Record summary:
This 177-nucleotide RNA was probed chemically with 2A3 and DMS. For 2A3, 1,237 sequencing reads were counted. Values cover nucleotides 27 to 126. The reactions ran in a buffer of 150 mM KOAc, 10 mM MgCl2 and 150 mM bicine (pH 8.5), at 24 C.
[RMDB]
RNA sequence: GGGAACGACUCGAGUAGAGUCGAAAAGUGGAUUUAUCGCCUGAUUAGCCCUUUUCUAAUUAUUGCGGUGGCACUAAUUUUUCAGCCGGAAUUGCGAAAGAUGUUGGCGAAGAUUGGGCGUCAGGGGCGUAAGAUACCGGUUCGCCGGUAUCUUACGAAAAGAAACAACAACAACAAC
Reactivity to 2A3 in 0.01 (KOAc 150mM, MgCl2 10mM, bicine 150mM(pH8.5), 24C), signal-to-noise 2, nucleotides 027 to 126: g070u080g060g100a170u050u120u080a170u190c070g030c050c010u000g010a030u040u080a030g000c000c040c000u040u000u040u080c030u070a070a080u050u080a010u020u050g050c060g230g090u120g170g000c010a000c060u000a020a100u010u080u010u120u090c030a030g020c030c040g080g000a070a030u100u120g070c080g050a080a080a020g090a030u100g050u260u150g020g000c000g010a020a010g010a000u000u020g040g000g000c000g020u000c020a010g030g020g010g040
Reactivity to DMS in 0.01 (KOAc 150mM, MgCl2 10mM, bicine 150mM(pH8.5), 24C), signal-to-noise 3, nucleotides 027 to 126: g010u000g000g000a190u030u000u010a090u000c050g000c010c040u000g000a020u000u010a300g020c030c000c010u010u000u020u010c060u010a050a040u000u010a020u010u000g000c040g000g020u020g010g030c030a030c100u010a020a020u000u000u010u020u010c070a190g030c010c010g010g010a080a050u000u000g020c060g000a100a120a120g000a030u010g020u000u000g010g020c010g010a050a050g030a080u000u000g000g020g040c010g000u000c030a010g010g000g010g000